[RMDB]
RNA sequence: GGGAACGACUCGAGUAGAGUCGAAAAUCCUCGGCGGACAGCAGGGCAUGGAUGAAGUCCUGCGGGAUGUCGGCGAAGCGGAUCGGCGUCCGGCGCAUCUCGCCGAACUCGGAGAUCAGCUUGCCGUGCAUCAUCUCCACUUCGGUGGAGAUGAUGCAAAAGAAACAACAACAACAAC
Reactivity to 2A3 in 0.01 (KOAc 150mM, MgCl2 10mM, bicine 150mM(pH8.5), 24C), signal-to-noise 4, nucleotides 027 to 126: u000c010c010u010c010g000g000c030g030g040a030c030a020g000c000a000g000g020g010c050a090u130g090g180a180u150g200a190a030g010u000c000c000u000g010c000g000g010g000a010u060g040u050c010g010g020c010g070a050a010g000c010g030g020a020u010c010g060g020c050g100u010c020c000g000g010c020g000c030a150u110c120u070c050g010c000c000g000a030a030c030u030c030g140g070a180g000a030u010c010a000g040c000u020u030g050c020c010g010u020
Reactivity to DMS in 0.01 (KOAc 150mM, MgCl2 10mM, bicine 150mM(pH8.5), 24C), signal-to-noise 1, nucleotides 027 to 126: u030c000c010u000c070g000g040c020g020g000a210c070a050g040c000a010g000g010g020c020a180u000g000g030a090u070g000a100a200g010u000c000c000u020g010c020g000g000g030a170u050g000u000c000g000g000c000g000a000a000g010c000g000g000a050u000c000g000g030c170g000u000c000c000g000g000c000g030c300a190u020c240u030c000g000c000c000g000a050a000c040u000c090g000g000a210g000a010u000c000a080g010c000u000u000g000c000c050g000u040